[RMDB]
The data come from the RNA Mapping Database (RMDB), library RFM100. Chemical mapping of a 177-nucleotide RNA with 2A3. Conditions: 150 mM KOAc, 10 mM MgCl2 and 150 mM bicine (pH 8.5), 24 C. For 2A3, 465 sequencing reads were counted. For 2A3 the reverse transcriptase was SuperScript II with manganese.
RNA sequence: GGGAACGACUCGAGUAGAGUCGAAAAACGCUGAUACGUCAGCGAAUUAUUACACGCAAAGGUAAUAAUCAAAUUAAUUUAAGGAAACUUUUUUUAAUUUGUAUCGGGAGGAAAUGCACGAUACAAAACAUCAGCAAGCUUUCGAGCUUGCUGAUGUAAAAGAAACAACAACAACAAC
Reactivity to 2A3 in 0.01 (KOAc 150mM, MgCl2 10mM, bicine 150mM(pH8.5), 24C), signal-to-noise 2, nucleotides 027 to 126: a000c000g000c000u000g010a000u060a060c210g160u000c020a000g000c000g000a000a000u000u000a000u040u040a000c300a080c020g260c120a020a110a110g100g000u000a000a000u030a000a000u010c020a040a000a210u090u080a060a040u160u090u130a090a110g000g000a000a020a000c050u120u000u000u010u010u050u050a010a150u060u000u140g000u000a000u000c000g050g000g040a120g100g250a010a000a130u260g040c100a070c040g000a000u000a010c000a000a020a000